[RMDB]
The record gives the reactivity of an RNA of 177 nucleotides to 2A3 and DMS.

RNA sequence: GGGAACGACUCGAGUAGAGUCGAAAAAAACCAGGUACUUGUCGGCUCCGGAGGUGGCGAUGACGUGGCGCCGGGAGGUGUUGAGGGUCAUGUCGUUUUCGCGGUAGGUGCCCUCGAUGAUUGAUGAGUCUCUUCAUGUGUUCGCACAUGAAGAGACAAAAGAAACAACAACAACAAC
Reactivity to 2A3 in 0.01 (KOAc 150mM, MgCl2 10mM, bicine 150mM(pH8.5), 24C), signal-to-noise 4, nucleotides 027 to 126: a010a000a010c020c000a030g090g020u090a020c020u080u080g080u110c000g040g020c030u080c050c020g070g030a110g010g070u030g000g030c040g060a140u100g010a060c010g060u060g020g030c030g020c040c010g020g040g000a040g030g040u050g000u080u070g020a030g030g000g000u020c010a030u170g000u040c020g030u040u000u190u150c130g000c010g000g020u040a020g000g160u180g010c000c010c000u000c010g060a070u090g010a030u070u170g040a080u040g030a020
Reactivity to DMS in 0.01 (KOAc 150mM, MgCl2 10mM, bicine 150mM(pH8.5), 24C), signal-to-noise 3, nucleotides 027 to 126: a040a030a100c040c010a110g000g030u010a030c090u000u010g020u010c030g020g010c000u000c030c010g020g010a080g020g000u000g000g000c050g010a060u010g010a070c100g010u010g020g020c070g010c030c020g020g000g010a010g000g010u020g000u010u030g000a010g000g000g010u010c100a220u030g010u020c000g000u020u000u010u000c280g020c040g000g000u010a240g010g030u040g000c000c000c010u000c010g000a050u010g010a200u030u040g000a050u000g000a290
Reactivities are given for positions 27 through 126. DMS adducts were read by reverse transcription with MarathonRT. The reactions ran in a buffer of 150 mM KOAc, 10 mM MgCl2 and 150 mM bicine (pH 8.5), at 24 C. For 2A3, 2,447 sequencing reads were counted. For DMS, 4,538 sequencing reads were counted. It was measured as part of the RMDB library OK1LIB.